[RMDB]
Chemical mapping of a 177-nucleotide RNA with DMS and 2A3. The data come from the RNA Mapping Database (RMDB), library TTRDES. For 2A3, 23,885 sequencing reads were counted. For 2A3 the reverse transcriptase was SuperScript II with manganese. The DMS profile rests on 9,451 reads.
RNA sequence: GGGAACGACUCGAGUAGAGUCGAAAAGAUAUGGAGUGUGUGUCCCGACAACAGCCUUGUCGGAAACGACAAGGACAUGUCGGAACACCACUCCUAAGUCAAACGGGUACCCUUCGGGGUACCCGAAGAUAAGUCUUAAGUUCGCUUAAGACUUAUCAAAAGAAACAACAACAACAAC
Reactivity to DMS in 0.01 (KOAc 150mM, MgCl2 10mM, bicine 150mM(pH8.5), 24C), signal-to-noise 6, nucleotides 027 to 126: g000a040u000a300u010g000g010a020g020u000g000u020g040u000g020u000c010c000c000g000a010c010a040a110c300a210g000c010c010u000u000g000u000c000g010g000a050a060a200c000g010a020c010a010a000g010g010a010c100a070u000g010u010c000g020g000a020a000c000a010c000c000a000c000u000c000c000u000a010a060g010u000c040a070a120a280c030g010g000g000u000a010c010c000c000u000u010c240g050g010g020g000u000a000c000c000c000g000a000a010
Reactivity to 2A3 in 0.01 (KOAc 150mM, MgCl2 10mM, bicine 150mM(pH8.5), 24C), signal-to-noise 3, nucleotides 027 to 126: g030a000u060a060u180g000g010a010g000u040g020u060g000u000g010u080c010c000c000g000a000c010a120a030c040a030g080c010c000u010u020g000u010c010g020g060a060a080a060c020g010a000c010a000a010g010g010a020c000a020u050g010u000c000g000g000a000a010c000a000c000c000a000c000u000c000c000u010a030a010g040u010c030a080a040a100c020g000g000g000u000a000c020c010c000u010u090c300g060g000g000g010u000a010c000c000c010g000a000a000